[RMDB]
RNA sequence: GGGAACGACUCGAGUAGAGUCGAAAAGAUAUGGAUCCUAGCGAUAAGCUUCCGAUCGGAAACGAUCGGAAAGCUUUUGACGCUGUCAUCCUAAGUCAAAAUCUGUUCCUGUUCGCAGGAACAGAAAGUUGCUUCUACUCUUCGGAGUAGAAGCAACAAAAGAAACAACAACAACAAC
Reactivity to DMS in 0.01 (KOAc 150mM, MgCl2 10mM, bicine 150mM(pH8.5), 24C), signal-to-noise 1, nucleotides 027 to 126: g000a010u000a060u010g000g000a010u010c060c020u010a030g030c000g010a060u020a020a010g020c000u000u000c000c000g020a000u000c000g050g000a030a030a040c000g010a000u000c010g000g000a000a000a020g030c010u000u000u000u010g000a200c010g000c000u000g010u000c070a020u000c000c000u010a000a130g000u020c000a090a070a080a120u000c020u010g000u000u000c000c010u000g030u000u010c190g020c000a010g000g010a020a010c010a000g010a000a030a120
The data come from the RNA Mapping Database (RMDB), library TTRDEL. Chemical mapping of a 177-nucleotide RNA with DMS. The DMS profile rests on 1,401 reads.